[RMDB]
RNA sequence: GGGAACGACUCGAGUAGAGUCGAAAAUACCGAUGCAACCACCGUGUUGGGCAUUGGAAAGGUCCUAACCGAAGCUCCAUCCAAAAAUGUUAGGCUAGUGGUUCUUGCCACGGCUACCCCCCCUGGAGUGUUUCCGGAUGUUCGCAUCCGGAAACACAAAAGAAACAACAACAACAAC
Reactivity to 2A3 in 0.01 (KOAc 150mM, MgCl2 10mM, bicine 150mM(pH8.5), 24C), signal-to-noise 1, nucleotides 027 to 126: u140a020c000c000g010a020u000g070c010a090a010c000c020a030c020c030g210u120g040u190u020g050g040g000c000a010u000u010g070g000a030a060a040g030g000u030c010c000u040a000a100c000c050g030a080a030g000c020u080c000c000a070u040c060c040a040a030a030a030a030u190g050u190u090a070g020g040c000u110a240g000u030g040g040u150u130c090u130u300g020c000c000a020c010g000g000c000u000a030c000c000c000c000c000c000c000u020g000g000a040
The record gives the reactivity of an RNA of 177 nucleotides to 2A3.
Source: RMDB library OK1LIB, as collected in RNAgym.
2A3 adducts were read by reverse transcription with SuperScript II with manganese.